An RNA of 177 nucleotides, treated with DMS and 2A3 and read out base by base. For DMS the reverse transcriptase was MarathonRT. For DMS, 43,289 sequencing reads were counted. The RNA was probed in 150 mM KOAc, 10 mM MgCl2 and 150 mM bicine (pH 8.5) at 24 C.
[RMDB]
RNA sequence: GGGAACGACUCGAGUAGAGUCGAAAAGGUGAGUUCUAGCUGGGCGCAUUGAGGACAUCGACUUCCUGCAACUGACGAAGGGUCAGGACUUCACGAUUGCAAAGUCGGUGGCUGAUGCUAUCGAGCAAGCAUAGAAUAGAUUCGUCUAUUCUAUGCUAAAAGAAACAACAACAACAAC
Reactivity to DMS in 0.01 (KOAc 150mM, MgCl2 10mM, bicine 150mM(pH8.5), 24C), signal-to-noise 9, nucleotides 027 to 126: g000g020u010g010a100g010u000u000c040u000a080g010c020u000g000g020g010c300g010c010a030u000u000g010a130g000g010a060c010a020u000c010g010a030c010u000u010c150c090u000g000c010a010a020c030u010g010a150c150g010a020a010g010g000g010u030c170a130g020g000a070c010u010u000c010a190c040g000a080u000u000g000c000a020a030a020g000u000c000g010g020u000g000g000c010u000g000a030u000g000c010u010a080u020c040g010a030g010c050a150
Reactivity to 2A3 in 0.01 (KOAc 150mM, MgCl2 10mM, bicine 150mM(pH8.5), 24C), signal-to-noise 9, nucleotides 027 to 126: g120g030u110g060a160g020u040u020c040u060a030g000c010u050g040g030g000c030g000c020a020u040u120g300a080g020g050a030c000a010u010c000g000a010c000u020u010c020c020u010g000c010a030a030c020u080g050a070c090g050a080a050g100g020g050u160c090a050g050g130a020c000u040u020c030a030c100g200a270u020u020g000c000a150a270a020g000u000c000g000g010u010g010g000c010u020g010a010u020g000c010u050a120u220c030g020a010g020c040a040